The data come from the RNA Mapping Database (RMDB), library TTRDEL.
The record gives the reactivity of an RNA of 177 nucleotides to DMS and 2A3.
The reactions ran in a buffer of 150 mM KOAc, 10 mM MgCl2 and 150 mM bicine (pH 8.5), at 24 C.
The DMS profile rests on 2,590 reads.
For 2A3, 4,288 sequencing reads were counted.
For 2A3 the reverse transcriptase was SuperScript II with manganese.
RNA sequence: GGGAACGACUCGAGUAGAGUCGAAAAGAUAUGGAUCCUCAGUGAAGGCAACAGCUCGGAAACGAGACAUGCCUGCUGGGAUCCUAAGUCAAAGACACCGGGAAAUGUUCGCAUUUCCCGGUGUCAAGAGAAGUAGUACGUUCGCGUACUACUUCUCAAAAGAAACAACAACAACAAC
Reactivity to DMS in 0.01 (KOAc 150mM, MgCl2 10mM, bicine 150mM(pH8.5), 24C), signal-to-noise 3, nucleotides 027 to 126: g000a020u000a300u020g010g010a050u000c010c000u010c030a020g010u010g010a160a030g030g010c000a040a130c230a150g000c010u000c000g010g000a090a060a210c000g030a010g000a030c090a240u000g000c010c000u000g010c010u000g000g000g000a010u000c000c010u000a010a050g010u000c040a120a130a150g000a010c000a010c000c020g010g010g000a000a010a000u000g000u000u020c190g030c000a010u000u000u000c000c000c010g000g010u000g000u010c000a020a040
Reactivity to 2A3 in 0.01 (KOAc 150mM, MgCl2 10mM, bicine 150mM(pH8.5), 24C), signal-to-noise 2, nucleotides 027 to 126: g020a020u080a040u120g010g000a010u000c000c060u260c030a000g030u110g300a300a100g070g000c030a070a040c060a300g070c000u000c000g000g000a060a060a040c020g000a000g020a020c040a100u130g000c000c020u010g020c010u000g000g000g000a010u010c000c010u000a010a010g000u000c010a020a010a130g010a000c010a000c000c020g010g000g000a000a000a000u070g010u150u210c300g010c140a020u000u000u000c000c020c000g020g010u000g000u010c000a000a000